[RMDB]
RNA sequence: GGGAACGACUCGAGUAGAGUCGAAAAGUACAAUGUUUCGACAUUGUACGAUGGAGCCAAAGCCGAAAGGCAUUUUAAACCUUGGCUGGCGAAAGCCUAAAAGAAGAAUCCAUUUCGAUGGAUUCAAGAGGAGUAAAUGUUUCGACAUUUACUCCUCAAAAGAAACAACAACAACAAC
Reactivity to DMS in 0.01 (KOAc 150mM, MgCl2 10mM, bicine 150mM(pH8.5), 24C), signal-to-noise 5, nucleotides 027 to 126: g000u000a000c000a010a000u000g000u000u000u020c180g040a070c000a000u010u000g010u000a000c000g000a090u020g010g020a300g000c020c000a040a100a090g030c010c000g020a070a060a090g000g020c050a060u000u020u020u000a080a110a130c040c040u000u000g000g000c030u000g010g010c010g000a110a120a090g010c010c020u000a060a050a070a080g020a140a100g000a010a000u000c000c000a020u000u010u000c170g010a020u000g010g020a010u000u000c010a050a090
Reactivity to 2A3 in 0.01 (KOAc 150mM, MgCl2 10mM, bicine 150mM(pH8.5), 24C), signal-to-noise 4, nucleotides 027 to 126: g000u000a010c000a000a010u020g010u000u050u090c120g020a000c000a010u000u010g000u000a000c000g000a030u050g050g090a020g000c020c000a140a130a010g010c020c010g160a130a030a020g000g010c010a020u010u020u010u110a110a090a010c010c010u010u040g020g000c030u020g000g000c030g020a040a010a030g010c010c000u100a110a100a020a010g180a090a020g000a010a000u020c000c000a000u030u050u080c130g040a010u010g000g000a000u000u000c010a000a010
Structure probing data (DMS and 2A3) for a 177-nucleotide construct. It was measured as part of the RMDB library M2PK50. For 2A3 the reverse transcriptase was SuperScript II with manganese. The 2A3 profile rests on 6,285 reads. Conditions: 150 mM KOAc, 10 mM MgCl2 and 150 mM bicine (pH 8.5), 24 C. Values cover nucleotides 27 to 126.